This 177-nucleotide RNA was probed chemically with DMS and 2A3. The reactions ran in a buffer of 150 mM KOAc, 10 mM MgCl2 and 150 mM bicine (pH 8.5), at 24 C. Source: RMDB libraries RFM100 and RFMREP, as collected in RNAgym. For 2A3 the reverse transcriptase was SuperScript II with manganese. DMS adducts were read by reverse transcription with MarathonRT.
RNA sequence: GGGAACGACUCGAGUAGAGUCGAAAAGCGCAGCGGGCGAGGCGCGCCGCGGCAGCCCCGAGGAGAGCGGGCGGGGGCACCGGUACCGGCCGGGGACGGGUGAAACAGGAUGAUCCCGCCGAGACCGAAAUUGUUGUUAUUUCGAUAACAACAAUUUAAAAGAAACAACAACAACAAC
Reactivity to DMS in 0.01 (KOAc 150mM, MgCl2 10mM, bicine 150mM(pH8.5), 24C), signal-to-noise 9, nucleotides 027 to 126: g010c070g020c030a060g010c040g010g000g010c040g010a120g000g010c050g010c040g010c020c020g010c030g010g010c050a130g010c040c010c010c040g010a110g000g010a110g010a100g010c070g000g010g010c050g000g000g000g000g010c060a060c090c020g020g010u000a070c090c020g000g000c050c040g010g010g000g010a090c050g000g000g010u010g000a110a080a130c110a100g000g010a110u010g010a130u020c010c000c000g000c010c000g000a090g000a090c040c030g000
Reactivity to 2A3 in 0.01 (KOAc 150mM, MgCl2 10mM, bicine 150mM(pH8.5), 24C), signal-to-noise 8, nucleotides 027 to 126: g050c050g000c060a030g020c030g010g030g000c050g050a080g060g070c050g010c010g020c020c010g050c010g010g000c010a030g020c000c000c010c010g020a060g060g040a070g010a030g040c060g000g010g000c030g020g000g000g000g000c020a030c010c010g010g000u040a080c020c010g040g010c040c030g020g000g000g030a030c030g040g010g000u080g050a050a060a030c050a040g100g010a050u100g020a040u060c000c000c000g000c010c000g010a040g020a020c010c020g020